[RMDB]
Chemical mapping of a 177-nucleotide RNA with DMS and 2A3. For DMS, 2,686 sequencing reads were counted. Reactivities are given for positions 27 through 126. DMS adducts were read by reverse transcription with MarathonRT. It was measured as part of the RMDB library TTRDES.
RNA sequence: GGGAACGACUCGAGUAGAGUCGAAAAGAUAUGGAUCGGUCUACUGGGAGAGAUGGUUUCGGAAACGAAACCGUCUCGAAGAACAGUAGAGCCGAUCCUAAGUCAAAGGUAAGGUUCGCCUUACCAACAACCUUUGUAACUUCGGUUACAAAGGUUGAAAAGAAACAACAACAACAAC
Reactivity to DMS in 0.01 (KOAc 150mM, MgCl2 10mM, bicine 150mM(pH8.5), 24C), signal-to-noise 3, nucleotides 027 to 126: g000a030u010a300u000g010g000a000u000c000g010g010u010c000u000a010c000u000g020g020g010a170g000a010g020a020u000g020g010u000u000u010c000g010g000a160a100a150c010g000a020a010a010c010c000g000u000c000u000c000g010a050a110g030a160a140c010a030g000u010a000g020a070g010c000c000g010a000u000c000c000u010a020a060g020u010c070a080a130a080g000g020u010a000a040g000g030u010u020c300g020c000c000u000u000a020c000c000a110a120
Reactivity to 2A3 in 0.01 (KOAc 150mM, MgCl2 10mM, bicine 150mM(pH8.5), 24C), signal-to-noise 1, nucleotides 027 to 126: g010a010u080a040u170g000g000a020u000c000g000g030u030c000u010a000c020u020g000g050g030a130g010a010g000a020u010g010g020u000u000u000c040g010g030a080a100a080c010g000a000a020a000c010c010g000u000c000u000c030g010a040a010g020a030a020c020a010g000u010a000g020a020g020c010c010g000a000u000c000c000u000a020a020g040u000c060a120a110a060g000g000u020a000a020g030g000u040u190c300g060c070c000u000u000a010c000c020a000a000